[RMDB]
RNA sequence: GGGAACGACUCGAGUAGAGUCGAAAAACUAGUAUGUACACGAUGAGACUGCCGUGUCGUCUAGACUGCGGAUCCAAUAAUCUCAGAUCUGCGAGAUAUUGUCUCAUGAGUACGAGACAAGUACUCAGUGUUAUGACUACUUCGGUGGUCGUAACACAAAAGAAACAACAACAACAAC
Reactivity to DMS in 0.01 (KOAc 150mM, MgCl2 10mM, bicine 150mM(pH8.5), 24C), signal-to-noise 9, nucleotides 027 to 126: a110c020u000a020g000u030a010u000g010u040a010c010a020c020g000a110u010g000a100g010a070c070u020g010c080c000g000u000g010u000c000g010u000c020u010a020g010a190c090u010g010c030g000g000a020u000c030c170a100a130u040a020a100u030c140u010c130a130g000a030u000c020u000g000c020g000a060g000a090u020a050u010u010g000u000c000u000c010a070u000g000a040g010u010a020c050g000a110g010a090c190a060a070g000u000a040c000u000c000a080
Reactivity to 2A3 in 0.01 (KOAc 150mM, MgCl2 10mM, bicine 150mM(pH8.5), 24C), signal-to-noise 9, nucleotides 027 to 126: a000c010u010a010g050u090a030u040g060u070a010c010a000c010g040a040u090g020a020g070a040c050u060g090c050c000g000u000g010u000c000g000u000c010u010a020g030a100c030u050g000c010g020g000a000u000c010c020a060a050u150a090a100u090c070u010c080a020g000a050u000c000u010g000c020g020a020g010a020u140a050u040u100g010u000c000u000c000a020u010g020a000g020u020a010c020g010a000g030a040c060a050a030g010u000a010c000u000c020a010